[RMDB]
Chemical mapping of a 177-nucleotide RNA with 2A3 and DMS.
Values are in units of 0.01, from 0 to 300, in steps of 10.
DMS adducts were read by reverse transcription with MarathonRT.
The 2A3 profile rests on 8,327 reads.
It was measured as part of the RMDB library OK2TST.
The DMS profile rests on 18,908 reads.
RNA sequence: GGGAACGACUCGAGUAGAGUCGAAAAAAUUCUUGUUUUGCACUAAAACGGUCAUUUACAAGUGGAAUUUGUUGACGAUCUUGUGUAAAGUAUUCAUUUGGACGUGGAGUUCCAAAUACGUCAUAUGAGGAUAUAUGUGAUUCGUCACAUAUAUCCUAAAAGAAACAACAACAACAAC
Reactivity to 2A3 in 0.01 (KOAc 150mM, MgCl2 10mM, bicine 150mM(pH8.5), 24C), signal-to-noise 5, nucleotides 027 to 126: a010a010u150u050c030u040u030g040u030u020u000u010g010c010a010c010u140a060a070a130a070c100g020g000u000c000a030u040u070u120a010c010a010a020g030u060g160g110a220a140u050u030u040g030u000u030g030a020c020g000a010u000c000u060u060g000u010g020u030a020a000a020g020u020a120u060u090c050a040u020u040u110g080g000a010c010g030u080g100g170a110g030u090u010c010c010a030a000a020u100a040c030g030u030c050a030u050a130u190g090
Reactivity to DMS in 0.01 (KOAc 150mM, MgCl2 10mM, bicine 150mM(pH8.5), 24C), signal-to-noise 9, nucleotides 027 to 126: a070a090u010u000c030u000u000g010u000u000u000u000g010c040a020c020u000a040a060a080a110c240g000g000u000c010a050u000u000u000a020c020a010a020g020u010g020g010a120a110u010u000u000g010u000u000g010a020c060g010a040u000c020u000u000g010u000g010u000a020a020a020g010u000a060u010u000c100a070u000u000u000g010g010a030c020g010u000g010g010a260g010u010u010c010c010a030a030a050u000a070c090g010u000c070a060u010a060u000g010